[RMDB]
RNA sequence: GGGAACGACUCGAGUAGAGUCGAAAAGAUAUGGAUCCGUGUGUGGACAUGCUUUAGGGUCGGAAACGACCCGAAGAGCAACAGCCACCACGGAUCCUAAGUCAAAAGGCUAGGUUCGCCUAGCCAAGAUUUACUUUGUCUUCGGACAAAGUAAAUCAAAAGAAACAACAACAACAAC
Reactivity to DMS in 0.01 (KOAc 150mM, MgCl2 10mM, bicine 150mM(pH8.5), 24C), signal-to-noise 4, nucleotides 027 to 126: g000a020u000a300u010g000g000a010u000c010c000g030u000g010u010g030u000g000g000a060c120a170u010g000c000u010u000u000a300g020g020g000u000c010g000g000a090a060a220c000g010a000c000c000c000g000a050a150g000a010g000c000a030a070c260a130g010c010c000a010c010c010a010c000g000g000a000u000c000c000u000a010a040g010u000c020a100a100a140a140g000g010c010u000a000g000g010u010u020c300g010c000c000u000a010g000c000c000a040a070
Reactivity to 2A3 in 0.01 (KOAc 150mM, MgCl2 10mM, bicine 150mM(pH8.5), 24C), signal-to-noise 3, nucleotides 027 to 126: g010a000u040a010u100g010g000a000u010c030c000g000u000g060u070g000u010g030g040a070c140a300u270g000c020u300u300u050a040g000g030g000u000c010g020g010a060a060a020c000g000a000c000c010c000g010a010a000g010a000g040c010a050a050c100a050g070c000c000a000c000c010a010c000g020g000a000u000c000c000u000a010a000g000u000c000a030a060a030a160g020g000c000u010a000g070g010u060u090c300g110c060c000u000a010g040c010c010a000a000